[RMDB]
RNA sequence: GGGAACGACUCGAGUAGAGUCGAAAACUGGAGGAAAAUCUGCAGGAGUCAUCCCCAGUGCAGUAUCGGGAAGCCUCCAGGCUCCUCUCACACCUUUGGAAUAUGUCCAGGAUCUCAUCACCUGGCAGACGCCUAAAGACUUCGGUCUUUAGGCGUCAAAAGAAACAACAACAACAAC
Reactivity to DMS in 0.01 (KOAc 150mM, MgCl2 10mM, bicine 150mM(pH8.5), 24C), signal-to-noise 1, nucleotides 027 to 126: c040u040g010g040a100g000g060a110a040a070a010u110c020u000g010c050a170g080g000a100g000u010c050a130u000c000c000c000c090a080g050u010g000c000a060g000u000a060u010c170g000g080g010a150a050g050c000c000u000c000c040a060g020g000c060u000c000c000u000c110u090c100a140c100a020c000c000u000u000u020g000g000a300a070u060a180u000g110u020c000c000a010g000g000a030u000c010u020c160a020u000c130a070c020c020u030g000g000c090a020
Reactivity to 2A3 in 0.01 (KOAc 150mM, MgCl2 10mM, bicine 150mM(pH8.5), 24C), signal-to-noise 3, nucleotides 027 to 126: c010u020g030g000a020g030g030a000a080a030a190u040c050u050g010c020a030g020g060a100g110u110c100a160u160c020c000c010c010a020g050u010g000c020a010g000u070a100u180c110g000g010g100a060a050g040c000c000u000c000c000a000g010g000c010u050c000c000u030c000u070c010a040c010a010c020c010u040u120u180g070g050a100a030u160a100u130g070u080c010c000a000g000g020a090u020c140u030c090a160u050c020a010c040c000u010g000g010c000a010
The record gives the reactivity of an RNA of 177 nucleotides to DMS and 2A3. For DMS the reverse transcriptase was MarathonRT. 2A3 adducts were read by reverse transcription with SuperScript II with manganese. It was measured as part of the RMDB library OK1LIB.